This 177-nucleotide RNA was probed chemically with 2A3 and DMS. It was measured as part of the RMDB library OK2TST. For 2A3, 693 sequencing reads were counted.
RNA sequence: GGGAACGACUCGAGUAGAGUCGAAAAAGAAGAUAGUGCGCUGUCGUCCCAGACGUCGCGCCAGCGCUGGGCUAGAGUCUCCACUGUUUCAUGGGCAUUAAGACCACUCGGUUGGGGCACAACCCACCCACGGUCUGAAAUUCGUUUCAGACCGUGGAAAAGAAACAACAACAACAAC
Reactivity to 2A3 in 0.01 (KOAc 150mM, MgCl2 10mM, bicine 150mM(pH8.5), 24C), signal-to-noise 1, nucleotides 027 to 126: a020g130a040a000g050a050u300a080g120u060g050c000g000c000u050g000u050c000g050u060c030c030c010a000g000a010c010g060u150c040g000c020g010c030c010a050g000c050g010c020u070g000g020g000c040u060a030g010a000g110u000c010u000c020c000a020c050u040g100u080u150u130c110a090u090g030g000g050c050a050u260u290a040a080g020a080c000c000a030c090u030c000g010g010u070u020g030g000g050g060c010a030c010a040a070c020c020c010a050c000
Reactivity to DMS in 0.01 (KOAc 150mM, MgCl2 10mM, bicine 150mM(pH8.5), 24C), signal-to-noise 1, nucleotides 027 to 126: a150g030a120a120g020a090u010a020g010u010g030c080g000c040u000g010u000c020g000u000c010c010c020a170g030a110c090g020u010c100g000c020g000c000c030a030g020c070g030c090u000g000g010g020c040u000a100g010a060g010u010c000u000c000c020a060c040u000g000u000u000u020c110a120u010g010g010g010c060a100u000u000a080a100g000a080c010c020a090c080u000c090g060g000u000u000g030g000g010g000c120a050c080a140a080c030c000c010a060c210